[RMDB]
RNA sequence: GGGAACGACUCGAGUAGAGUCGAAAAAAUGGGCGGUUUCAGCAUCGAAAAGGCGGUACCGGAUGCUUCGGCCAUAACAGGAUCGGUGCAACAGGCAGAGCCUGCCGAAACCGAUACGGGCAAGCUAGACCUAAUGGUGAUUCGUCACCAUUAGGUCAAAAGAAACAACAACAACAAC
Reactivity to 2A3 in 0.01 (KOAc 150mM, MgCl2 10mM, bicine 150mM(pH8.5), 24C), signal-to-noise 2, nucleotides 027 to 126: a000a010u080g030g030g010c010g000g010u020u090u190c040a000g010c000a040u050c030g070a050a040a100a080g060g000c080g000g040u050a050c010c010g050g000a010u040g010c000u030u030c030g050g000c000c010a070u090a090a010c040a070g110g000a050u030c010g020g000u030g000c020a060a040c020a040g050g050c010a010g020a030g230c000c010u020g030c070c030g040a030a010a010c010c010g000a000u020a060c050g000g020g050c030a060a010g050c030u070a030
Reactivity to DMS in 0.01 (KOAc 150mM, MgCl2 10mM, bicine 150mM(pH8.5), 24C), signal-to-noise 4, nucleotides 027 to 126: a040a040u010g010g010g030c050g010g000u010u000u020c100a070g000c030a040u000c060g020a040a070a190a130g010g000c040g010g010u010a150c100c020g010g010a060u010g000c030u000u000c070g020g010c020c030a050u010a090a120c140a160g020g000a050u000c000g010g010u000g010c120a060a180c040a020g000g010c010a170g000a220g000c040c010u000g000c030c040g000a100a150a010c010c010g000a030u000a010c060g000g000g010c090a060a060g020c160u010a080
Chemical mapping of a 177-nucleotide RNA with 2A3 and DMS. It was measured as part of the RMDB library OK2TST. High DMS reactivity at an A or C suggests that its Watson-Crick edge is free.